[RMDB]
RNA sequence: GGGAACGACUCGAGUAGAGUCGAAAAGCGUACUACCGUUCUUUUGACGAGCCAUCGUGCAAGCAGGGUCCCAAAUAGGACCCUGUGAUGACCACGAUGAAGCUCGAUAAGAACGGUAUCGCAAACACCCCAGUACGCUUCGGCGUACUGGGGUGAACUGUAAGAGACAGUUCGCUGUCUCUUACAGAAAAGAAACAACAACAACAAC
Reactivity to DMS in 0.01 (KOAc 150mM, MgCl2 10mM, bicine 150mM(pH8.5), 24C), signal-to-noise 1, nucleotides 027 to 156: g000c020g050u000a120c170u010a040c010c000g010u000u010c030u000u000u030u000g010a210c020g030a010g080c030c020a030u000c010g000u010g010c020a140a300g050c050a030g040g030g000u000c000c010c040a110a180a150u000a030g000g010a030c000c000c010u000g000u020g010a050u010g020a260c270c000a040c020g010a000u000g010a050a190g030c000u000c000g010a040u000a050a010g010a020a020c020g000g030u010a000u000c010g070c040a110a070a190c000a040c010c030c000c000a110g050u000a010c000g040c010u010u000c300g020g050c000g010u000a000c000u000g000g000g020g040u010g000a010a030
Reactivity to 2A3 in 0.01 (KOAc 150mM, MgCl2 10mM, bicine 150mM(pH8.5), 24C), signal-to-noise 2, nucleotides 027 to 156: g000c010g030u080a060c070u010a000c010c000g000u000u000c020u070u100u110u180g280a150c000g000a000g010c000c000a000u000c000g000u000g010c040a110a130g000c000a000g020g000g000u000c050c030c060a230a270a110u250a080g000g000a000c000c000c000u000g000u000g000a030u000g000a020c040c030a000c000g000a000u000g010a050a000g000c000u000c000g030a040u030a050a060g000a000a000c010g000g000u000a000u000c000g010c010a000a030a020c000a000c020c000c010c010a000g010u000a000c020g000c000u100u140c300g100g010c000g010u000a010c010u000g000g030g000g000u000g000a000a050